[RMDB]
RNA sequence: GGGAACGACUCGAGUAGAGUCGAAAAAUUGGAUCAAGGCUGCUAGCUCGUUUGUGAAAAUUGAAUGUGGAAAGGUGGCUUUAUGACAGGACUGACCACAUUAAAGGGGGUGAAUGCUGAAAAAUGCUCACCAAGUGAACUUCGGUUCACUUGGUGAAAAAGAAACAACAACAACAAC
Reactivity to DMS in 0.01 (KOAc 150mM, MgCl2 10mM, bicine 150mM(pH8.5), 24C), signal-to-noise 1, nucleotides 027 to 126: a070u000u030g010g000a080u000c060a070a130g000g020c030u000g020c170u000a090g000c020u000c070g010u000u000u000g000u010g000a140a020a060a020u010u000g020a060a060u000g010u010g000g000a060a090a060g000g030u000g000g010c080u010u010u040a080u040g000a050c100a100g010g000a090c000u010g010a300c000c030a000c020a000u000u000a070a080a060g010g010g020g020g030u010g000a020a130u020g020c010u010g010a010a060a050a100a050u010g010c040
Record summary: An RNA of 177 nucleotides, treated with DMS and read out base by base. It was measured as part of the RMDB library OK2TRN. Conditions: 150 mM KOAc, 10 mM MgCl2 and 150 mM bicine (pH 8.5), 24 C. For DMS, 869 sequencing reads were counted.